[RMDB]
RNA sequence: GGGAACGACUCGAGUAGAGUCGAAAAAGUAUCGAGCGAAAAGCUUGAUACAAAUGCCAGCUAUGAGGUAAAGUGUCAUAGCAAAAAGGAUACGAAUAAAUAAAGUAUCCAAGACUCGAAAGAGUCAGGAUAGUUGAAGCUUCGGCUUCAACUAUCCAAAAGAAACAACAACAACAAC
Reactivity to 2A3 in 0.01 (KOAc 150mM, MgCl2 10mM, bicine 150mM(pH8.5), 24C), signal-to-noise 3, nucleotides 027 to 126: a010g000u010a000u000c000g000a000g040c000g080a300a070a100a050g000c000u000u000g000a000u000a000c000a000a090a020u140g000c000c010a000g000c000u010a000u000g010a010g010g010u020a100a100a110g150u120g000u090c000a000u000a010g000c010a040a020a000a000a110g000g000a000u000a000c010g020a070a080u130a100a070a000u180a020a160a010g000u000a000u000c000c000a000a020g000a000c000u000c000g010a010a020a020g010a010g000u000c000a000
Reactivity to DMS in 0.01 (KOAc 150mM, MgCl2 10mM, bicine 150mM(pH8.5), 24C), signal-to-noise 1, nucleotides 027 to 126: a140g050u000a000u000c020g010a000g050c000g010a010a090a130a080g020c000u050u020g000a010u000a000c000a070a040a270u000g000c010c040a140g000c000u000a000u000g000a030g000g070u010a100a050a220g030u090g000u040c000a000u000a030g010c000a000a030a020a170a100g010g000a000u000a000c000g020a110a110u000a120a100a060u020a020a210a150g000u070a000u000c020c020a050a120g000a010c010u000c000g000a060a060a140g000a000g000u000c020a070